[RMDB]
RNA sequence: GGGAACGACUCGAGUAGAGUCGAAAACAAAAAAGGAGGGUGAAAUGAAAGGAAGAAGAAAAACUCAGCAUUCUUUCCUCUGACAAAGAGUAAAACGACAAGGAAUAUCGGCCUGAAUUCUCUUCCCCAUUGAUAAGGGGUUCGCCCCUUAUCAAUGAAAAGAAACAACAACAACAAC
Reactivity to DMS in 0.01 (KOAc 150mM, MgCl2 10mM, bicine 150mM(pH8.5), 24C), signal-to-noise 3, nucleotides 027 to 126: c060a000a040a060a040a080a110g020g000a100g000g030g010u010g020a070a060a080u000g010a040a080a060g010g030a040a050g000a070a060g010a040a050a070a100a110c110u000c050a050g010c050a050u000u000c020u010u000u000c080c010u000c030u010g000a080c170a020a070a030g010a050g010u010a030a020a070a100c110g010a040c110a040a090g000g000a090a080u000a050u010c120g000g000c040c020u000g010a070a070u000u010c020u000c030u000u000c010c010c040
Reactivity to 2A3 in 0.01 (KOAc 150mM, MgCl2 10mM, bicine 150mM(pH8.5), 24C), signal-to-noise 2, nucleotides 027 to 126: c010a020a030a010a010a000a040g040g020a020g010g000g010u080g000a130a070a040u070g010a150a070a020g040g020a030a040g030a050a070g060a030a150a020a020a000c030u020c030a020g010c020a040u040u010c000u040u040u040c000c000u010c000u020g040a030c080a060a090a010g040a000g020u100a060a060a080a030c030g010a030c040a060a030g050g010a060a020u090a030u150c040g050g000c000c010u040g010a030a020u100u010c010u000c000u050u030c000c000c010